An RNA of 177 nucleotides, treated with DMS and 2A3 and read out base by base. For DMS, 2,321 sequencing reads were counted. Reactivities are given for positions 27 through 126. Reactivities are rounded to 0.1 and cut off at 0 and 3. DMS adducts were read by reverse transcription with MarathonRT. The reactions ran in a buffer of 150 mM KOAc, 10 mM MgCl2 and 150 mM bicine (pH 8.5), at 24 C. Source: RMDB library OK1LIB, as collected in RNAgym.

[RMDB]
RNA sequence: GGGAACGACUCGAGUAGAGUCGAAAAGCAAGUUUUAGCAGCGGACGAAGUAGAACCUGCCGUCUGUAUUACUCCAUCUUGAAAAGCUGACAAGUUCUAUGCAUCGGUCCGUAUCUCGAGGAUGGACCUCGAUGAGGUGAUUCGUCACCUCAUCGAGAAAAGAAACAACAACAACAAC
Reactivity to DMS in 0.01 (KOAc 150mM, MgCl2 10mM, bicine 150mM(pH8.5), 24C), signal-to-noise 2, nucleotides 027 to 126: g010c140a230a090g040u000u020u000u030a160g000c020a090g020c020g040g000a010c020g000a080a150g020u020a080g000a070a000c010c040u030g020c050c030g000u010c020u000g000u030a080u010u040a100c160u000c080c050a020u000c080u030u000g000a040a090a050a110g000c020u030g000a030c130a100a170g000u000u010c010u000a010u000g040c270a140u060c120g000g040u000c000c000g080u000a070u020c030u000c040g000a010g000g020a100u000g030g000a150c120
Reactivity to 2A3 in 0.01 (KOAc 150mM, MgCl2 10mM, bicine 150mM(pH8.5), 24C), signal-to-noise 3, nucleotides 027 to 126: g020c030a070a100g050u080u060u290u270a090g010c060a010g020c010g000g000a010c000g040a110a000g020u050a030g040a060a070c010c000u010g140c100c030g020u050c010u040g040u030a090u060u190a050c040u020c040c030a120u100c070u010u040g050a050a090a060a050g000c020u020g010a020c010a150a020g000u060u000c020u030a040u140g010c050a060u060c110g140g010u040c020c000g000u020a130u030c030u000c030g030a020g040g020a030u070g040g120a140c060